Chemical mapping of a 207-nucleotide RNA with 2A3.
[RMDB]
RNA sequence: GGGAACGACUCGAGUAGAGUCGAAAAGGAAUUGGAAGGUCAUCCUUCACAGGAUCGUGUGGAAGUCCUGCUCGGGGCAGAAGCAUUAAAACCAUUCGAGCUAGUCAAUGCGUGGCGUGUCUCUCCGGUGUUUCUCUGGACUUCGGUCCAGAGAAAAGUCCUUUCACUUGUUCGCAAGUGAAAGGACAAAAGAAACAACAACAACAAC
Reactivity to 2A3 in 0.01 (KOAc 150mM, MgCl2 10mM, bicine 150mM(pH8.5), 24C), signal-to-noise 1, nucleotides 027 to 156: g010g010a070a030u160u110g030g010a020a000g000g010u160c030a140u110c010c000u070u070c060a070c010a050g000g030a020u080c020g010u020g000u020g130g000a040a020g000u040c000c020u010g070c020u020c040g050g080g030g020c060a010g010a090a000g050c000a000u020u190a030a020a000a090c040c010a030u070u150c070g000a000g030c010u080a050g110u030c080a080a050u100g040c030g040u030g000g000c060g010u080g040u000c010u000c000u010c010c020g000g000u070g040u000u030u000c000u000c000u000g000g000a020c000u000u010c060g060g050u000c000c000a000g000a000g010a000a000a000a000
Source information:
The reactions ran in a buffer of 150 mM KOAc, 10 mM MgCl2 and 150 mM bicine (pH 8.5), at 24 C.